An RNA of 177 nucleotides, treated with 2A3 and read out base by base. Reactivities are given for positions 27 through 126. Source: RMDB library OK1LIB, as collected in RNAgym. Conditions: 150 mM KOAc, 10 mM MgCl2 and 150 mM bicine (pH 8.5), 24 C.
[RMDB]
RNA sequence: GGGAACGACUCGAGUAGAGUCGAAAACACAGUGUUAAUGGGUCUCGGGAAAGGAUGGCCAUUGUCAAAGAUGGACAUCGGAGUUCCCCUUCUCGCCAUUGGAUGCUACUCACAAGUCAACCCCAUAAUGGACCCUGGCAUUCGUGCCAGGGUCCAUAAAAGAAACAACAACAACAAC
Reactivity to 2A3 in 0.01 (KOAc 150mM, MgCl2 10mM, bicine 150mM(pH8.5), 24C), signal-to-noise 1, nucleotides 027 to 126: c110a000c030a000g030u060g040u240u050a030a000u010g090g060g000u130c020u050c130g080g010g010a130a060a090g090g000a020u000g000g000c000c000a000u000u000g110u100c040a180a000a000g070a040u040g000g000a000c000a000u030c020g070g010a110g010u020u050c000c000c000c000u030u000c010u000c000g090c000c000a030u010u010g030g030a030u090g030c000u020a000c000u000c010a030c050a120a000g000u010c000a000a110c000c000c040c000a030u170a200